[RMDB]
The data come from the RNA Mapping Database (RMDB), library M2RFPK.
An RNA of 207 nucleotides, treated with DMS and 2A3 and read out base by base.
RNA sequence: GGGAACGACUCGAGUAGAGUCGAAAAGUUAUGCUCUCGCUGCCUAAUGGCGGUGCGGGAAACCCACUCUAAAGUCCUUAGGGUUAGCCCCUUAAGGCGGGGUUCGGAGGCACCUGGCAACAGAAGUUGAAACUGUGCACAUUCGUGUGCACAGUAAGUUUGGUUAACUAUUCGUAGUUAACCAAACAAAAGAAACAACAACAACAAC
Reactivity to DMS in 0.01 (KOAc 150mM, MgCl2 10mM, bicine 150mM(pH8.5), 24C), signal-to-noise 2, nucleotides 027 to 156: g000u010u000a060u010g000c010u030c020u000c030g080c020u000g020c020c000u000a150a140u000g030g040c080g000g030u000g040c050g010g030g030a090a080a090c010c000c020a080c110u000c040u010a050a050a110g000u010c040c000u000u010a060g000g010g000u000u000a210g040c210c270c000c000u000u000a050a030g000g070c000g000g000g010g000u000u000c030g030g000a150g030g020c090a070c030c030u000g010g000c030a040a190c030a100g020a050a200g010u000u010g000a110a060a040c000u010g000u020g020c000a020c010a110u000u010c300g010u010g010u000g000c000a000c010a010g000u000a000a060
Reactivity to 2A3 in 0.01 (KOAc 150mM, MgCl2 10mM, bicine 150mM(pH8.5), 24C), signal-to-noise 3, nucleotides 027 to 156: g050u070u100a100u240g030c000u000c030u040c020g020c000u020g010c010c020u300a300a250u250g020g010c050g000g090u050g000c040g010g000g000a050a030a040c010c030c000a060c040u220c090u160a160a120a210g300u060c000c010u010u010a000g010g000g030u060u070a040g010c010c000c000c000u020u050a000a000g010g000c000g010g000g000g000u060u090c070g100g020a040g060g030c020a020c010c010u020g200g050c020a030a000c010a030g020a060a030g000u070u110g090a110a060a000c000u000g000u010g000c000a000c000a000u030u070c170g100u040g000u000g010c000a000c000a010g010u000a000a010

Values cover nucleotides 27 to 156.